[RMDB]
RNA sequence: GGGAACGACUCGAGUAGAGUCGAAAAAAUGCCGCCUCAGUUCCAAGCUCUUUCGUGGCACUGUAAUCAGUCCUAUUGAGUUAGGGGCAGUCAACCACGUUGCGAAGCUAAAUUAUCUGGUCGAGAGUUACGAUUCCCUACUUCGGUAGGGAAUCAACAUUACAGAGGCUUUCGAGCCUCUGUAAUGAAAAGAAACAACAACAACAAC
Reactivity to 2A3 in 0.01 (KOAc 150mM, MgCl2 10mM, bicine 150mM(pH8.5), 24C), signal-to-noise 2, nucleotides 027 to 156: a000a000u070g020c030c060g010c010c000u070c020a020g000u090u050c000c020a040a010g000c000u020c030u030u060u030c060g010u050g000g000c090a000c020u000g050u090a110a130u150c070a050g120u030c030c010u010a020u050u050g190a200g190u020u030a030g000g000g000g000c000a010g000u010c000a010a030c010c020a010c010g000u020u000g060c150g070a130a010g000c020u010a060a150a060u220u170a110u110c080u060g110g030u010c040g030a010g010a010g110u090u050a030c100g020a000u020u010c000c000c000u000a020c020u020u050c120g130g000u000a000g000g000g000a000a000u000c000a000a000
Reactivity to DMS in 0.01 (KOAc 150mM, MgCl2 10mM, bicine 150mM(pH8.5), 24C), signal-to-noise 2, nucleotides 027 to 156: a080a060u000g010c050c010g000c000c000u010c070a120g000u020u000c020c040a170a300g000c050u000c030u010u000u000c040g010u000g030g030c060a040c020u000g000u000a070a120u000c080a220g030u010c000c000u000a030u000u000g020a300g020u000u000a030g020g020g020g000c020a030g040u000c050a070a050c000c000a090c050g020u000u020g000c100g000a100a120g030c060u000a050a010a080u000u000a040u000c070u000g020g050u000c020g010a120g000a110g000u000u000a090c050g020a020u010u010c000c000c000u010a010c030u000u000c240g040g040u010a000g010g000g000a010a000u000c000a020a130